This 177-nucleotide RNA was probed chemically with 2A3 and DMS. For 2A3 the reverse transcriptase was SuperScript II with manganese. For DMS, 1,442 sequencing reads were counted. The RNA was probed in 150 mM KOAc, 10 mM MgCl2 and 150 mM bicine (pH 8.5) at 24 C. DMS adducts were read by reverse transcription with MarathonRT.

RNA sequence: GGGAACGACUCGAGUAGAGUCGAAAACUAAGUCUCGCGGCAAUUAUGCGCUCCAUGACUUUGCAGAGACAGCUCGUGAGCGUCACAGGCCUGUAAGAAUCGAGGUCCUCCGCCUUUUUUCCGGCCUGUUUCAGGCCGCAUUCGUGCGGCCUGAAACAAAAGAAACAACAACAACAAC
Reactivity to 2A3 in 0.01 (KOAc 150mM, MgCl2 10mM, bicine 150mM(pH8.5), 24C), signal-to-noise 4, nucleotides 027 to 126: c010u040a080a070g120u020c020u020c040g040c050g070g040c020a050a060u130u050a130u300g100c070g020c000u000c040c060a120u170g010a110c110u050u080u130g040c080a020g020a020g040a160c000a020g050c000u010c030g040u060g070a060g000c010g010u030c010a010c000a070g020g030c010c000u020g000u080a130a040g060a070a070u090c080g000a040g010g020u070c070c100u030c020c020g020c010c000u000u070u020u000u060u000c010c020g050g010c030c040u020
Reactivity to DMS in 0.01 (KOAc 150mM, MgCl2 10mM, bicine 150mM(pH8.5), 24C), signal-to-noise 1, nucleotides 027 to 126: c010u020a100a130g000u030c020u000c050g010c070g030g000c010a140a140u050u020a140u000g000c040g010c010u000c020c080a130u030g020a030c110u010u030u000g020c070a140g010a120g040a150c080a190g020c110u000c000g000u010g000a070g000c010g030u090c060a050c060a030g010g030c010c000u080g170u040a080a020g000a000a020u060c050g030a010g000g000u000c040c020u040c030c060g030c000c000u000u000u000u000u000u000c060c030g010g000c010c000u020